[RMDB]
RNA sequence: GGGAACGACUCGAGUAGAGUCGAAAACAGUCUGGCUUGUGAGACUCUAUAGGGAGUCAAUCUGCAAUAGUUAAGUGGUUAGUUCUUCUGUCUAGGAUCAGUGUUUUCAUGGUGACUUUGGAGUUGCGAUAGGGUGAGUCUUCGGACUCACCCUAUCAAAAGAAACAACAACAACAAC
Reactivity to DMS in 0.01 (KOAc 150mM, MgCl2 10mM, bicine 150mM(pH8.5), 24C), signal-to-noise 1, nucleotides 027 to 126: c020a050g000u020c080u000g010g040c050u000u020g040u000g000a300g020a040c000u010c000u000a080u010a120g060g000g020a010g000u000c000a080a160u000c030u000g000c040a060a050u000a090g000u000u020a120a120g000u010g000g000u000u000a130g000u010u000c070u000u000c000u000g000u000c060u000a080g020g020a070u000c000a030g000u000g010u000u000u000u000c010a060u010g030g040u000g010a130c030u000u010u020g000g000a030g000u000u000g000c270